This 177-nucleotide RNA was probed chemically with DMS and 2A3. 2A3 is a SHAPE reagent: it acylates the 2'-hydroxyl of flexible nucleotides of all four kinds. It was measured as part of the RMDB library TTRDES.
RNA sequence: GGGAACGACUCGAGUAGAGUCGAAAAGAUAUGGAACACGUGUAGGGAGUCGUGGUUCGGAAACGAACCAAACGACGAGGAUCUACCGUGUUCCUAAGUCAAAGGUGAUUAUCUUCGGAUAAUCACCCGACUAGAAAAGGUUCGCCUUUUCUAGUCGAAAAGAAACAACAACAACAAC
Reactivity to DMS in 0.01 (KOAc 150mM, MgCl2 10mM, bicine 150mM(pH8.5), 24C), signal-to-noise 6, nucleotides 027 to 126: g000a020u000a260u010g000g010a020a010c000a000c000g010u020g010u000a000g010g020g010a120g030u000c000g060u000g010g000u000u000c000g010g000a040a040a120c000g010a010a010c000c010a020a070a090c020g010a020c000g010a140g010g000a120u010c000u000a010c000c000g020u000g000u000u000c000c000u000a000a050g000u000c020a080a130a160g010g010u000g000a010u000u000a000u000c000u000u010c220g020g010a010u000a010a000u000c000a000c000c000
Reactivity to 2A3 in 0.01 (KOAc 150mM, MgCl2 10mM, bicine 150mM(pH8.5), 24C), signal-to-noise 7, nucleotides 027 to 126: g010a000u030a010u090g000g000a010a000c010a000c010g270u300g010u180a020g020g060g170a300g020u000c010g010u010g000g010u000u010c000g000g020a000a020a030c000g000a000a000c000c000a100a130a020c030g010a000c010g020a220g100g090a160u020c000u010a000c000c000g000u000g000u000u000c000c000u000a000a000g000u010c040a120a090a110g020g000u010g000a010u010u010a000u000c020u050u110c300g140g000a010u000a000a000u010c000a000c000c000